RNA sequence: GGGAACGACUCGAGUAGAGUCGAAAAAGCAAGCUGCUGGAGGGUAUCUCGGUCAGCAUCUCGAUUGGCAAGACGUCCACUCCGGGUACGCGCCGCUCAUGCGAUGACGCCUUCAUCGCGUGAGCGGGCUCUAGUAACGGUUCGCCGUUACUAGAGCAAAAGAAACAACAACAACAAC
Reactivity to 2A3 in 0.01 (KOAc 150mM, MgCl2 10mM, bicine 150mM(pH8.5), 24C), signal-to-noise 5, nucleotides 027 to 126: a000g080c030a040a010g020c000u090g000c020u050g030g010a010g010g030g010u080a030u030c040u040c070g050g010u030c020a020g060c030a130u080c130u070c130g300a300u070u000g020g000c010a040a040g040a030c020g120u060c020c020a270c110u000c000c010g030g000g010u050a030c090g000c000g000c020c000g000c000u000c000a000u010g000c010g000a000u000g010a020c090g150c090c010u100u040c000a000u000c000g000c000g010u000g000a000g000c010g000g000
Reactivity to DMS in 0.01 (KOAc 150mM, MgCl2 10mM, bicine 150mM(pH8.5), 24C), signal-to-noise 5, nucleotides 027 to 126: a070g020c050a110a210g020c030u010g010c020u000g010g010a020g020g000g010u020a090u000c030u000c110g000g020u010c020a030g010c050a100u010c120u000c170g000a160u000u000g000g020c030a110a040g010a050c070g000u010c010c020a140c020u010c020c010g020g000g000u010a030c190g010c050g000c010c000g000c000u000c010a010u000g000c000g000a010u000g000a030c300g000c220c130u010u000c000a010u000c000g000c000g010u000g000a000g010c000g000g000